[RMDB]
RNA sequence: GGGAACGACUCGAGUAGAGUCGAAAACGUUAAUUCCCAAGAUGUCUAUAAGAGUCUUACCAUAGUUGACAUUCCACAGAGUUUGACUUUUUCAUAUGAUGGGUUACGUGGCGCAAUACGUAAAGCUGAGGUAAGCAGUUCGCUGCUUACAAAAGAAACAACAACAACAAC
Reactivity to 2A3 in 0.01 (KOAc 150mM, MgCl2 10mM, bicine 150mM(pH8.5), 24C), signal-to-noise 9, nucleotides 027 to 129: c010g000u020u080a020a020u070u020c000c000c000a000a000g070a070u150g070u020c030u060a050u030a110a060g010a020g030u000c000u030u060a070c010c010a080u080a060g060u020u070g070a050c030a130u110u030c030c000a070c030a040g070a040g060u030u050u060g010a000c000u020u050u020u060u060c070a060u050a060u260g110a060u100g030g050g010u030u040a020c030g010u040g050g000c060g000c060a050a090u060a090c050g070u070a050a050a030g040c040u050g040a020g050
Reactivity to DMS in 0.01 (KOAc 150mM, MgCl2 10mM, bicine 150mM(pH8.5), 24C), signal-to-noise 9, nucleotides 027 to 129: c150g010u030u030a070a170u000u030c000c000c000a150a170g020a100u040g020u000c010u000a000u030a070a120g000a050g020u030c000u000u000a100c010c010a120u040a070g020u000u000g010a130c140a090u010u000c040c030a080c090a100g000a070g000u000u030u020g030a090c050u000u010u040u020u020c060a010u010a080u020g030a050u000g050g010g030u030u030a010c050g000u020g000g000c150g030c090a050a080u050a010c090g030u040a050a060a060g030c050u000g000a120g020